[RMDB]
RNA sequence: GGGAACGACUCGAGUAGAGUCGAAAAGAAUUACGUCCUUUUGGAUUGCGAGAGGGGAAUUUACAUGCUCAGCCGAUUUUCGCUAUGCAUUUUCGCUUCUGGGAAGAACAGCAUUUUGGAAUUGAUCCGAUAGAUAGUUGUUCGCAACUAUCUAUCGAAAAGAAACAACAACAACAAC
Reactivity to DMS in 0.01 (KOAc 150mM, MgCl2 10mM, bicine 150mM(pH8.5), 24C), signal-to-noise 9, nucleotides 027 to 126: g000a120a090u010u010a090c130g010u000c010c000u000u000u010u010g010g010a070u000u010g010c050g000a060g020a070g010g010g000g010a080a060u010u000u010a070c180a060u000g010c040u000c110a070g020c060c060g010a110u010u000u010u000c080g010c030u010a080u000g010c030a060u000u000u010u000c050g000c050u000u000c040u000g010g010g010a080a060g010a040a070c080a070g010c060a090u010u000u010u000g020g010a080a140u000u000g000a140u000c080
Reactivity to 2A3 in 0.01 (KOAc 150mM, MgCl2 10mM, bicine 150mM(pH8.5), 24C), signal-to-noise 7, nucleotides 027 to 126: g020a020a030u160u100a050c040g070u040c010c000u070u070u070u160g070g020a070u060u180g080c050g020a040g010a030g050g030g000g030a020a020u090u060u080a080c050a040u060g010c010u040c090a020g040c030c040g050a060u050u010u050u160c010g000c030u020a040u090g010c020a030u030u020u020u080c050g000c010u050u000c020u040g050g010g020a060a030g020a080a020c020a030g050c020a040u080u090u070u110g070g060a090a080u060u080g040a040u050c050